[RMDB]
RNA sequence: GGGAACGACUCGAGUAGAGUCGAAAAAAAUGACAUCAUCACAGUCACCACCAAUAAGUAUCCAUUGGAAAGCAUCCAUGACAUUGUGCAUACAGCAAGGGGAAAGUGAUCUUAUCUAAAGCCCAUAGCACUAUAACCCUUUCGAGGGUUAUAGUGCAAAAGAAACAACAACAACAAC
Reactivity to DMS in 0.01 (KOAc 150mM, MgCl2 10mM, bicine 150mM(pH8.5), 24C), signal-to-noise 1, nucleotides 027 to 126: a050a030a060u010g000a030c010a060u000c060a110u000c070a040c130a100g000u000c000a090c040c040a120c060c020a060a090u000a090a100g040u000a100u010c020c020a040u000u010g000g000a090a080a070g070c110a060u000c050c040a040u010g020a100c060a080u000u000g080u000g010c040a050u010a000c060a050g010c030a060a080g020g000g000g000a040a130a040g010u000g000a050u000c030u000u010a020u010c030u010a010a050a120g010c060c010c020a130u010a140
Reactivity to 2A3 in 0.01 (KOAc 150mM, MgCl2 10mM, bicine 150mM(pH8.5), 24C), signal-to-noise 2, nucleotides 027 to 126: a000a000a000u140g020a010c040a040u050c010a020u080c020a020c010a060g030u060c020a030c010c030a060c010c030a080a060u120a130a010g060u080a050u090c060c010a040u060u070g020g040a010a060a060g000c040a050u040c050c030a050u060g040a040c020a060u180u090g070u120g000c020a060u040a110c090a070g000c040a020a060g010g010g030g020a010a110a000g030u010g030a030u010c000u020u070a050u000c030u050a000a080a140g030c000c010c010a040u170a020
Notes
This 177-nucleotide RNA was probed chemically with DMS and 2A3. For DMS the reverse transcriptase was MarathonRT. Conditions: 150 mM KOAc, 10 mM MgCl2 and 150 mM bicine (pH 8.5), 24 C. Reactivities are given for positions 27 through 126. The data come from the RNA Mapping Database (RMDB), library OK2TST. For 2A3, 1,079 sequencing reads were counted.